[RMDB]
RNA sequence: GGGAACGACUCGAGUAGAGUCGAAAAUAGAAGACAUUCGCAGAGAGAGGGAGGAAAGAGACGUCCCGCAGAGCAGAUCGUACCCGCUGGUCCUUGCCUCUCUGCCCUGGACUUGUGGGUAGGGUGAACCUCAGCAUAUGUUCGCAUAUGCUGAGGUAAAAGAAACAACAACAACAAC
Reactivity to DMS in 0.01 (KOAc 150mM, MgCl2 10mM, bicine 150mM(pH8.5), 24C), signal-to-noise 3, nucleotides 027 to 126: u010a120g020a100a090g010a080c100a140u000u010c060g020c040a050g000a070g030a060g010a070g010g010g020a040g010g030a050a080a090g000a080g000a100c140g010u000c010c010c060g030c170a060g000a090g010c090a060g000a050u000c080g020u000a030c010c000c010g000c030u010g000g010u000c000c010u000u000g000c070c050u010c050u010c040u000g020c050c030c040u000g000g000a030c030u000u000g010u010g000g010g030u000a010g000g010g030u000g010a090
Reactivity to 2A3 in 0.01 (KOAc 150mM, MgCl2 10mM, bicine 150mM(pH8.5), 24C), signal-to-noise 2, nucleotides 027 to 126: u110a010g080a130a000g050a000c060a080u130u130c070g020c050a020g030a000g010a000g010a030g100g010g020a030g030g020a070a110a030g070a030g000a010c040g040u020c000c010c030g000c050a070g000a010g070c070a010g020a140u080c040g040u050a010c000c010c000g020c020u010g000g000u020c000c010u010u020g010c010c020u050c000u000c010u030g020c020c010c000u040g020g000a020c000u010u050g010u030g010g020g010u020a020g000g020g020u050g070a050
Conditions: 150 mM KOAc, 10 mM MgCl2 and 150 mM bicine (pH 8.5), 24 C. An RNA of 177 nucleotides, treated with DMS and 2A3 and read out base by base. For 2A3, 2,387 sequencing reads were counted. The data come from the RNA Mapping Database (RMDB), library OK2TST.